[RMDB]
RNA sequence: GGGAACGACUCGAGUAGAGUCGAAAAGACGCCAUUUUCUCGGUUUGCAGAUGGGAAAGCUGUGUUAAGAUCAAGCAUACGUGAAUUCAUAAUGAGCGAGGCGUUGCACAGUAUUGGAAUUCCAUCCCGUAAUAUCACGUUUCGACGUGAUAUUACGAAAAGAAACAACAACAACAAC
Reactivity to 2A3 in 0.01 (KOAc 150mM, MgCl2 10mM, bicine 150mM(pH8.5), 24C), signal-to-noise 9, nucleotides 027 to 126: g050a000c020g020c010c010a060u050u030u100u010c040u010c030g140g060u060u120u160g070c060a040g010a050u040g010g010g020a040a080a030g000c000u000g010u000g030u120u180a120a060g040a190u140c100a090a030g040c030a050u090a200c050g030u050g070a090a040u090u110c050a040u110a280a080u130g040a030g040c030g020a030g050g000c010g020u010u040g010c010a010c000a010g030u050a140u100u170g090g080a040a050u060u010c010c000a010u010c010c010
Reactivity to DMS in 0.01 (KOAc 150mM, MgCl2 10mM, bicine 150mM(pH8.5), 24C), signal-to-noise 7, nucleotides 027 to 126: g010a120c080g000c010c000a080u020u010u010u010c000u010c020g010g000u010u010u020g020c120a120g000a040u000g010g000g000a040a090a120g010c010u000g010u000g020u020u010a150a120g000a140u040c180a090a170g010c070a080u020a080c060g000u010g000a140a050u010u010c190a090u020a130a060u020g010a190g000c010g010a140g000g010c030g010u010u000g000c020a020c000a030g010u000a100u020u010g010g010a090a110u010u000c000c020a030u010c030c150